[RMDB]
RNA sequence: GGGAACGACUCGAGUAGAGUCGAAAACUGCUGCAAUUACAACAUUUGCACCUUUCUUUGAUCGUUUUGAAGAAAACGCUGAUAAAUUUGAAGGCGUAGUAUUCAUGUCAUGGGAUGAAUGCUGUGACCAGUCGAAGAUAUUCGUAUCUUCGACUGGAAAAGAAACAACAACAACAAC
Reactivity to DMS in 0.01 (KOAc 150mM, MgCl2 10mM, bicine 150mM(pH8.5), 24C), signal-to-noise 3, nucleotides 027 to 126: c030u010g020c100u000g000c060a040a080u000u010a090c150a070a100c120a070u020u000u010g020c110a080c060c020u000u000u000c060u030u000u000g000a070u000c170g000u000u010u000u000g000a080a060g000a050a070a110a030c020g020c080u010g000a100u000a050a050a130u000u010u010g020a140a220g000g000c000g000u010a040g010u000a080u000u000c040a010u010g020u000c070a090u000g030g000g000a020u000g010a050a030u000g010c010u000g030u010g000a140
Reactivity to 2A3 in 0.01 (KOAc 150mM, MgCl2 10mM, bicine 150mM(pH8.5), 24C), signal-to-noise 4, nucleotides 027 to 126: c030u050g010c030u040g010c020a030a080u120u080a160c050a210a020c000a120u020u030u080g000c020a050c010c030u060u070u060c030u060u060u080g050a080u050c060g090u070u090u070u100g070a070a020g040a020a040a010a010c010g010c040u000g030a110u120a300a230a250u220u220u150g060a080a030g010g000c000g000u000a000g010u010a020u010u000c000a000u020g080u100c050a120u130g100g060g030a000u010g060a070a030u040g000c020u000g000u010g030a060